RNA sequence: GGGAACGACUCGAGUAGAGUCGAAAAAUUUACGAAAUCAUUAGGUAAUGGAGUGGUCCAUCCCCAAUUCAAUCAAAAUAUUGUUUUCUCUCUCUCCAUAAACAAAUAGUAUUUUUGAUAUGACUGCAGAAAUUUGACAAUUCGUUGUCAAAUUUCUAAAAGAAACAACAACAACAAC
Reactivity to DMS in 0.01 (KOAc 150mM, MgCl2 10mM, bicine 150mM(pH8.5), 24C), signal-to-noise 1, nucleotides 027 to 126: a050u020u010u020a030c050g020a100a150a040u000c060a160u000u030a090g000g020u010a090a030u000g020g020a150g020u010g020g000u020c000c040a060u000c030c000c020c080a040a070u010u010c010a080a090u020c090a010a020a030a040u010a020u010u010g000u010u000u040u000c060u010c010u000c020u000c020u000c030c060a020u000a050a070a010c090a050a000a030u000a050g000u000a020u000u000u000u000u010g000a010u000a070u000g020a090c270u030g050c280
Reactivity to 2A3 in 0.01 (KOAc 150mM, MgCl2 10mM, bicine 150mM(pH8.5), 24C), signal-to-noise 3, nucleotides 027 to 126: a000u090u090u070a030c010g050a040a020a030u100c100a130u130u140a050g030g020u030a120a070u090g020g010a060g050u130g080g050u020c020c010a030u010c020c000c010c000a060a110u130u040c010a000a030u010c020a010a060a010a010u050a040u030u050g020u000u000u030u000c020u000c020u000c020u010c000u030c040c020a090u130a050a120a020c080a040a130a000u070a020g040u010a080u020u080u010u020u020g030a030u060a050u170g060a010c010u050g000c020
Notes:
Conditions: 150 mM KOAc, 10 mM MgCl2 and 150 mM bicine (pH 8.5), 24 C. The record gives the reactivity of an RNA of 177 nucleotides to DMS and 2A3. For 2A3, 1,482 sequencing reads were counted. DMS adducts were read by reverse transcription with MarathonRT. Reactivities are given for positions 27 through 126. The data come from the RNA Mapping Database (RMDB), library RFM100.